[RMDB]
Overview
This 177-nucleotide RNA was probed chemically with 2A3 and DMS. The 2A3 profile rests on 881 reads. Reactivities are rounded to 0.1 and cut off at 0 and 3. It was measured as part of the RMDB library RFMREP. Reactivities are given for positions 27 through 126. Conditions: 150 mM KOAc, 10 mM MgCl2 and 150 mM bicine (pH 8.5), 24 C.
RNA sequence: GGGAACGACUCGAGUAGAGUCGAAAAAGUCGGAAUCCGCUAAGGAGUGUGUAACAACUCACGGGCCGAAUGAACUAGCCCUGAAAAUGGAUGGCGCUCAAGCGUGCUACCCAUACCUCGCCGUCGGGGCAUACAUUGAGUUCGCUCAAUGUAUGCCAAAAGAAACAACAACAACAAC
Reactivity to 2A3 in 0.01 (KOAc 150mM, MgCl2 10mM, bicine 150mM(pH8.5), 24C), signal-to-noise 1, nucleotides 027 to 126: a000g030u020c000g020g030a080a150u090c030c000g000c110u130a060a110g150g010a020g050u030g000u050g110u120a110a070c090a060a050c020u010c000a000c020g000g000g000c010c000g020a040a090u120g040a050a070c020u030a070g030c020c040c000u100g120a130a050a010a020u120g040g000a020u000g030g000c060g000c050u060c120a020a070g040c040g070u070g010c030u070a040c000c000c020a030u090a090c030c010u080c040g030c030c000g070u070c050g000g000
Reactivity to DMS in 0.01 (KOAc 150mM, MgCl2 10mM, bicine 150mM(pH8.5), 24C), signal-to-noise 1, nucleotides 027 to 126: a100g000u040c040g010g010a090a060u010c010c000g020c270u090a160a080g000g010a160g000u010g000u000g010u030a120a040c110a040a120c050u010c070a100c070g010g000g000c010c000g000a030a020u020g000a100a110c080u000a090g000c000c000c000u000g000a050a030a070a090u000g000g010a020u000g000g000c000g000c060u000c110a130a090g010c170g000u000g020c010u000a060c000c020c010a040u000a060c130c080u000c050g020c030c040g020u000c020g000g010